An RNA of 177 nucleotides, treated with 2A3 and read out base by base. For 2A3, 263 sequencing reads were counted. 2A3 adducts were read by reverse transcription with SuperScript II with manganese.

RNA sequence: GGGAACGACUCGAGUAGAGUCGAAAAGCCCAUUUUCUAUAUACGUAAGCGCUAUUUCUGAAGAAUAGCUUAUUUGAUCAUGGCAAAGGCACGGCUAAUCCUUCCAAAACAUUUGGGAGGAUUUUUUAUUUGUCCCCAAUUUCGAUUGGGGACAAAUAAAAGAAACAACAACAACAAC
Reactivity to 2A3 in 0.01 (KOAc 150mM, MgCl2 10mM, bicine 150mM(pH8.5), 24C), signal-to-noise 1, nucleotides 027 to 126: g000c030c000c000a010u120u210u080u040c000u000a300u030a040u010a240c070g070u090a000a210g090c030g000c040u000a060u000u220u070c190u240g280a300a070g000a080a020u000a010g000c000u060u060a100u010u090u160g160a130u160c000a000u160g010g000c000a000a110a050g080g080c000a010c120g000g000c000u000a040a040u040c000c000u000u000c000c000a050a000a090a170c030a210u000u000u010g000g000g000a000g000g000a000u000u000u000u000u000u000
Source: RMDB library RFM100, as collected in RNAgym. Conditions: 150 mM KOAc, 10 mM MgCl2 and 150 mM bicine (pH 8.5), 24 C.